This 177-nucleotide RNA was probed chemically with DMS and 2A3. 2A3 adducts were read by reverse transcription with SuperScript II with manganese.
RNA sequence: GGGAACGACUCGAGUAGAGUCGAAAAGAUAUGGAAAAUGAGCGAUAAGCUGUCACUCGGAAACGAGUGUAGCUUUUGACGCUCUAUUCCUAAGUCAAACCGGAAAUUCGUUCGCGAAUUUCCGGAAGACUGACUUACACUUCGGUGUAAGUCAGUCAAAAGAAACAACAACAACAAC
Reactivity to DMS in 0.01 (KOAc 150mM, MgCl2 10mM, bicine 150mM(pH8.5), 24C), signal-to-noise 1, nucleotides 027 to 126: g010a080u000a290u000g000g000a010a000a100a170u040g010a000g060c000g010a140u010a010a030g000c000u000g010u000c000a000c000u010c000g020g000a080a110a190c010g000a010g020u000g040u000a000g000c000u000u000u010u040g010a140c020g000c000u000c000u000a150u000u010c000c000u020a030a150g020u000c030a110a100a210c010c010g000g000a000a000a000u000u020c000g010u010u010c300g000c000g020a010a000u000u000u000c010c010g010g020a020a060
Reactivity to 2A3 in 0.01 (KOAc 150mM, MgCl2 10mM, bicine 150mM(pH8.5), 24C), signal-to-noise 1, nucleotides 027 to 126: g010a000u070a000u100g000g060a010a090a000a070u190g000a010g020c000g060a140u070a220a000g000c010u050g150u300c000a010c000u000c000g020g010a050a050a030c000g000a000g010u000g000u000a000g010c000u000u050u050u150g090a030c020g000c010u000c000u010a010u000u000c000c000u000a040a020g040u020c040a060a070a100c000c000g000g010a010a000a000u000u020c020g000u060u080c300g010c030g200a010a020u010u010u000c000c000g000g010a010a020